This 177-nucleotide RNA was probed chemically with 2A3. Reactivities are rounded to 0.1 and cut off at 0 and 3. It was measured as part of the RMDB library OK1LIB.

RNA sequence: GGGAACGACUCGAGUAGAGUCGAAAACUGUUAUCUAUUUGCUCCCUGUUGACCGACAGCAACCCGGCUGACCCUUUGGUCGGGAGCAUCGCCACCCAGUAUUUGCAGCAUCGCGAGGAACACGACCACGCGAGGCUGCCUUCGGGCAGCCUCGCGUAAAAGAAACAACAACAACAAC
Reactivity to 2A3 in 0.01 (KOAc 150mM, MgCl2 10mM, bicine 150mM(pH8.5), 24C), signal-to-noise 1, nucleotides 027 to 126: c060u060g030u010u140a140u060c170u090a300u000u300u140g000c000u000c000c010c000u030g300u260u300g000a000c000c000g100a000c100a080g000c000a090a280c000c000c000g070g000c050u020g140a090c030c000c050u010u000u240g020g020u000c030g000g030g000a000g090c000a000u000c000g020c000c000a070c000c000c000a000g090u000a160u010u080u090g050c000a030g050c010a000u010c070g000c000g140a130g150g050a150a060c080a000c260g230a030c000c020